[RMDB]
RNA sequence: GGGAACGACUCGAGUAGAGUCGAAAAAGACAUGCCGGUGAGAAAGUGGGUCCCAUGCCUUGUUUUAGAGGAGACUCUCUGGAAUCAGCUCUGUGCCCCGGUCACUCCUGGGUCAGGUAGAAGAGUCUGACUGCAGCCAGCUCUCAGGAUUUGCUGCCCAUAUUCCACACUUCGGUGUGGAAUAUGGAAAAGAAACAACAACAACAAC
Reactivity to 2A3 in 0.01 (KOAc 150mM, MgCl2 10mM, bicine 150mM(pH8.5), 24C), signal-to-noise 1, nucleotides 027 to 156: a020g030a030c020a070u070g050c000c090g060g030u060g000a070g010a060a100a010g030u020g030g080g010u030c070c000c000a040u090g030c000c000u100u060g050u050u170u040u170a020g010a020g000g020a020g010a030c030u000c000u000c010u050g030g060a080a070u060c000a070g010c030u030c020u080g040u090g070c000c020c000c050g000g000u030c050a000c110u210c010c000u020g060g000g000u070c030a020g000g050u020a020g000a280a030g010a020g030u000c040u020g070a010c030u040g000c000a010g000c060c000a010g030c040u000c010u070c040a050g000g120a100u120u070u020g000c010u030g000c000